[RMDB]
RNA sequence: GGGAACGACUCGAGUAGAGUCGAAAACGCUGGGACGGACCCAGCCUAACUACUGGAGCUGAAGCGCGCACGGCGUUGAAAGUAGGGAGGCUGCCGUCCUGUGCUGAAGCGCGCACGGCAACCGAAAGGUGCGGAAUAGUAGAUUUCGAUCUACUAAUUCGUACUGCAAAUUCGUUUGCAGUACGAAAAAAGAAACAACAACAACAAC
Reactivity to 2A3 in 0.01 (KOAc 150mM, MgCl2 10mM, bicine 150mM(pH8.5), 24C), signal-to-noise 1, nucleotides 027 to 156: c010g000c010u060g020g000g000a000c000g010g020a040c030c220c100a010g000c010c010u040a030a010c000u010a000c010u010g000g100a020g010c010u020g020a160a020g000c070g000c000g000c010a040c030g030g000c000g120u300u040g010a030a000a000g010u010a000g000g000g020a010g010g000c000u010g010c010c000g000u000c000c000u000g010u000g010c010u040g020a160a050g000c030g000c000g000c020a000c020g030g010c050a070a010c030c000g050a080a030a020g030g000u040g000c010g000g000a000a090u060a020g010u000a000g010a010u020u130u170c280g060a020u000c000u000a000c000u010a010a120
Reactivity to DMS in 0.01 (KOAc 150mM, MgCl2 10mM, bicine 150mM(pH8.5), 24C), signal-to-noise 1, nucleotides 027 to 156: c040g000c010u030g000g040g040a020c010g030g030a300c140c300c130a060g000c020c010u000a140a120c000u000a020c010u000g000g030a090g040c070u000g050a070a060g000c010g000c040g000c000a300c090g030g020c010g000u000u010g030a100a180a030g000u000a020g040g010g000a130g040g000c030u000g030c000c000g010u000c010c040u000g030u000g050c000u020g070a290a060g000c000g020c000g000c010a300c040g010g000c020a050a150c030c000g000a100a080a130g000g000u000g040c060g030g010a060a180u000a010g030u000a000g000a030u000u010u010c300g010a020u000c040u000a000c000u000a020a190
Overview
The record gives the reactivity of an RNA of 207 nucleotides to 2A3 and DMS. As a SHAPE reagent, 2A3 marks flexible, mostly unpaired nucleotides at the ribose 2'-OH. For 2A3, 2,003 sequencing reads were counted. For DMS the reverse transcriptase was MarathonRT. Conditions: 150 mM KOAc, 10 mM MgCl2 and 150 mM bicine (pH 8.5), 24 C. Source: RMDB library RNAMAK, as collected in RNAgym.